[RMDB]
RNA sequence: GGGAACGACUCGAGUAGAGUCGAAAAGAUAUGGAAGUAUUAGACAUCGAUCUGAGGCAUCGGAAACGAUGCUCAGGGAGUCUGGGUACUUCCUAAGUCAAAACAAGCCUAGUUCGCUAGGCUUGAACCACCUAAACGUGUUCGCACGUUUAGGUGGAAAAGAAACAACAACAACAAC
Reactivity to 2A3 in 0.01 (KOAc 150mM, MgCl2 10mM, bicine 150mM(pH8.5), 24C), signal-to-noise 2, nucleotides 027 to 126: g030a010u060a070u120g010g000a010a010g010u030a020u040u040a030g060a010c020a120u300c270g120a100u050c030u030g020a060g170g300c000a000u010c030g000g070a000a060a020c020g020a000u010g000c000u010c000a000g000g000g020a030g020u000c010u040g160g000g070u010a000c000u000u010c000c000u000a020a030g000u030c020a000a030a130a170c020a010a020g010c010c010u050a020g000u050u100c260g000c120u000a010g020g000c020u010u010g000a000a000
Reactivity to DMS in 0.01 (KOAc 150mM, MgCl2 10mM, bicine 150mM(pH8.5), 24C), signal-to-noise 2, nucleotides 027 to 126: g020a030u000a300u020g000g000a020a000g010u000a030u000u000a070g000a000c000a300u000c210g000a040u040c000u000g010a080g010g030c000a000u000c010g000g000a100a060a120c010g020a030u000g000c000u000c010a000g030g000g000a030g010u000c010u010g020g020g040u000a000c000u000u000c000c000u010a020a060g000u000c030a070a100a130a290c020a050a000g020c000c000u010a000g020u020u010c300g000c000u010a000g000g020c000u000u010g000a080a270
Chemical mapping of a 177-nucleotide RNA with 2A3 and DMS. 2A3 adducts were read by reverse transcription with SuperScript II with manganese. It was measured as part of the RMDB library TTRDES. For DMS the reverse transcriptase was MarathonRT. Values cover nucleotides 27 to 126.